Structure probing data (DMS) for a 177-nucleotide construct. The reactions ran in a buffer of 150 mM KOAc, 10 mM MgCl2 and 150 mM bicine (pH 8.5), at 24 C.

[RMDB]
RNA sequence: GGGAACGACUCGAGUAGAGUCGAAAAGAACACGAUUGGCCUGCACCACCGCCGGAUGCACCACGCCGGCCAGCGCCUCCUCAAAUGCACCCGCCGCCGCCCGAGCCUGCCGCGCUGCCAGCUCGGCAGUUCUGCACGAGUUCGCUCGUGCAGAACUAAAAGAAACAACAACAACAAC
Reactivity to DMS in 0.01 (KOAc 150mM, MgCl2 10mM, bicine 150mM(pH8.5), 24C), signal-to-noise 1, nucleotides 027 to 126: g010a120a170c100a040c110g030a080u000u000g010g040c000c010u020g020c050a070c050c040a090c060c090g000c090c060g020g000a040u010g000c080a110c090c050a050c120g000c030c030g000g000c050c050a060g020c080g020c050c010u000c020c010u020c060a010a070a030u010g000c040a060c070c030c060g020c030c030g000c030c010g020c010c010c020g010a090g000c040c020u000g010c000c040g000c090g020c030u000g000c060c060a100g010c000u000c060g010g010c100